[RMDB]
RNA sequence: GGGAACGACUCGAGUAGAGUCGAAAAGACAAUGUACUUUCUUCUAUGCUUAGAUUGCACACCGUUGAGUCAGGUGAUAUUAACGUUGUUGCAGCUUCCGGAUCUUUGACACGUAAAGUGAAGUUACUACCGGGCACGUUCGCGUGCCCGAAAAGAAACAACAACAACAAC
Reactivity to 2A3 in 0.01 (KOAc 150mM, MgCl2 10mM, bicine 150mM(pH8.5), 24C), signal-to-noise 2, nucleotides 027 to 129: g010a000c000a070a020u030g000u090a040c000u020u030u000c000u080u030c000u090a030u100g000c000u000u070a080g000a100u000u070g000c000a000c010a030c000c000g030u000u060g030a050g030u020c040a030g020g240u230g040a000u170a140u140u060a030a000c010g000u000u010g050u080u120g000c000a000g000c020u050u000c000c010g000g000a020u040c070u000u250u130g040a050c060a000c070g000u050a040a080a000g000u040g050a070a000g040u040u060a090c060u080a060c010
Reactivity to DMS in 0.01 (KOAc 150mM, MgCl2 10mM, bicine 150mM(pH8.5), 24C), signal-to-noise 2, nucleotides 027 to 129: g000a000c180a120a040u120g020u080a020c030u000u000u030c000u010u020c110u040a000u050g000c070u000u000a040g010a110u080u010g090c030a100c040a010c010c040g050u000u030g010a110g010u070c130a100g030g030u020g000a050u000a130u000u000a040a100c040g080u000u040g000u010u050g110c100a070g000c000u000u000c060c040g100g000a110u010c010u060u040u090g060a120c140a090c080g030u040a180a030a070g020u030g040a050a030g030u080u120a170c050u000a080c140
The record gives the reactivity of an RNA of 170 nucleotides to 2A3 and DMS. Values cover nucleotides 27 to 129. The RNA was probed in 150 mM KOAc, 10 mM MgCl2 and 150 mM bicine (pH 8.5) at 24 C. The 2A3 profile rests on 2,055 reads. The data come from the RNA Mapping Database (RMDB), library 15KLIB.